RNA sequence: GGGAACGACUCGAGUAGAGUCGAAAACAGCCGAGUGGGUCGAGGGGGGUGCAGCCGAGCAACUGGCUGACGACGGGGAUGCUGAUCAAGGUUGCCAGCGCGGCCAGUGAGCCCAGUGCGGUGAGCACAAGCAGGGGGAUUUCGAUCCCCCUGCUUGAAAAGAAACAACAACAACAAC
Reactivity to 2A3 in 0.01 (KOAc 150mM, MgCl2 10mM, bicine 150mM(pH8.5), 24C), signal-to-noise 3, nucleotides 027 to 126: c030a000g070c030c070g030a020g020u160g030g020g100u180c160g070a170g050g030g010g000g000g030u110g030c010a010g000c000c000g050a000g010c020a000a020c040u050g010g010c000u050g040a160c040g010a020c090g010g000g000g050a020u090g080c020u050g060a110u150c100a070a040g090g000u050u030g090c000c010a040g020c050g020c000g000g000c000c000a050g020u040g100a000g000c020c000c040a020g020u030g060c040g010g020u140g060a040g010c050a000
Reactivity to DMS in 0.01 (KOAc 150mM, MgCl2 10mM, bicine 150mM(pH8.5), 24C), signal-to-noise 2, nucleotides 027 to 126: c120a150g010c020c090g000a080g030u040g000g010g000u020c180g010a080g010g020g000g000g000g000u040g070c020a080g020c030c030g030a110g010c120a070a030c020u020g000g000c020u010g000a050c000g000a060c010g000g010g000g000a020u020g010c020u000g010a140u010c140a040a040g010g000u020u010g000c000c050a050g000c000g000c020g000g000c000c020a050g000u010g000a190g000c030c050c060a060g030u010g000c020g000g010u010g000a190g000c100a110

Structure probing data (2A3 and DMS) for a 177-nucleotide construct. For DMS, 3,566 sequencing reads were counted. For 2A3 the reverse transcriptase was SuperScript II with manganese. For 2A3, 1,921 sequencing reads were counted.